[RMDB]
RNA sequence: GGGAACGACUCGAGUAGAGUCGAAAAACUGUUCUCAAUUAUGCUACUGUGUGUAACUUAGGCUCGUCGCUGUCAUCUUGUUAUGACAGACGAGUCUCAUAACAAGAUGAGACUAGUGAGUAGGAGAUGGGUAGCGUAACACACACUUGAGAACAGACGUAGGUUGCAUGUUCGCAUGCAACCUACGAAAAGAAACAACAACAACAAC
Reactivity to 2A3 in 0.01 (KOAc 150mM, MgCl2 10mM, bicine 150mM(pH8.5), 24C), signal-to-noise 1, nucleotides 027 to 156: a030c000u000g000u000u000c000u010c000a010a030u170u100a090u200g050c050u020a090c020u030g010u000g040u070g030u180a120a060c050u040u080a030g120g000c000u000c030g050u000c000g020c250u050g070u080c000a000u000c030u040u140g000u230u000a000u000g010a010c060a020g010a120c010g010a040g010u000c000u020c000a010u010a070a000c010a010a010g010a010u000g000a000g040a050c030u100a030g050u070g130a080g050u080a140g020g190a130g030a060u070g000g030g000u030a030g030c010g020u040a050a000c010a000c000a000c000a000c140u010u050g000a000g000a010a000c000a000g010a000